Structure probing data (DMS and 2A3) for a 177-nucleotide construct.

[RMDB]
RNA sequence: GGGAACGACUCGAGUAGAGUCGAAAACUCUGCCAGCUCAUGGCCCUGUUGUGGCUCGAGCACCAGCCGCCCGCCCCCGAGGGGACGUGGGAGGAGCGGCUGGCCAGCUACUUCGCGCACCAGAUCCGAUAAAGACGGCAUUCGUGCCGUCUUUAUCAAAAGAAACAACAACAACAAC
Reactivity to DMS in 0.01 (KOAc 150mM, MgCl2 10mM, bicine 150mM(pH8.5), 24C), signal-to-noise 2, nucleotides 027 to 126: c050u010c080u010g010c050c030a110g010c100u010c110a120u020g020g020c040c080c010u000g000u000u000g010u000g020g050c020u000c270g010a020g030c050a250c010c000a010g040c010c000g010c000c010c040g000c020c010c000c000c010g000a150g020g020g040g020a190c030g010u000g030g010g020a060g030g010a110g000c000g000g000c000u010g010g020c070c060a080g000c040u000a060c050u010u000c120g010c060g030c080a130c040c040a070g000a070u030c110c090
Reactivity to 2A3 in 0.01 (KOAc 150mM, MgCl2 10mM, bicine 150mM(pH8.5), 24C), signal-to-noise 1, nucleotides 027 to 126: c030u030c050u060g050c010c020a020g020c030u040c090a070u100g050g000c040c000c020u140g030u150u080g020u070g000g000c020u020c070g020a040g000c000a020c000c010a000g000c000c000g000c000c000c000g030c020c010c000c000c010g030a170g040g000g020g030a040c010g010u050g010g000g020a020g020g000a170g020c010g000g000c020u000g030g010c010c010a000g000c000u010a050c000u010u060c040g010c010g000c040a020c050c020a030g120a130u170c050c050
Overview: Conditions: 150 mM KOAc, 10 mM MgCl2 and 150 mM bicine (pH 8.5), 24 C. It was measured as part of the RMDB library OK2TST.